[RMDB]
RNA sequence: GGGAACGACUCGAGUAGAGUCGAAAAGGCAACGAGCUCGAUGGACGGGCCGACCAAUACGCACUAGCCGCGACGGCGUUUCACUUGCUGACCGGCUCCCCGCCCUUUCAGCACGCCAACCCCGCCGCCGUCUAGUAUCGUUCGCGAUACUAGACGGAAAAGAAACAACAACAACAAC
Reactivity to 2A3 in 0.01 (KOAc 150mM, MgCl2 10mM, bicine 150mM(pH8.5), 24C), signal-to-noise 2, nucleotides 027 to 126: g040g010c030a050a070c120g100a110g000c020u080c070g120a100u060g060g020a000c020g010g000g040c010c020g080a090c000c070a030a060u200a170c070g040c050a060c050u070a010g010c020c000g010c080g070a040c050g010g060c020g010u070u180u160c100a130c060u090u140g030c010u020g020a060c030c000g000g000c000u040c020c000c000c010g020c020c000c020u040u180u030c020a010g030c030a000c050g000c010c000a040a040c010c000c020c000g100c020c010g110
Reactivity to DMS in 0.01 (KOAc 150mM, MgCl2 10mM, bicine 150mM(pH8.5), 24C), signal-to-noise 2, nucleotides 027 to 126: g000g000c060a130a060c080g000a110g010c010u000c060g000a150u010g000g000a110c020g000g000g030c080c020g000a140c060c020a100a080u000a110c130g010c130a100c080u010a050g030c000c020g000c060g020a110c070g000g010c070g010u000u010u000c180a110c130u000u010g030c030u010g000a090c210c070g000g000c060u000c100c020c000c030g000c060c000c010u000u020u020c050a060g010c050a120c070g010c060c000a020a150c040c000c020c030g010c140c120g030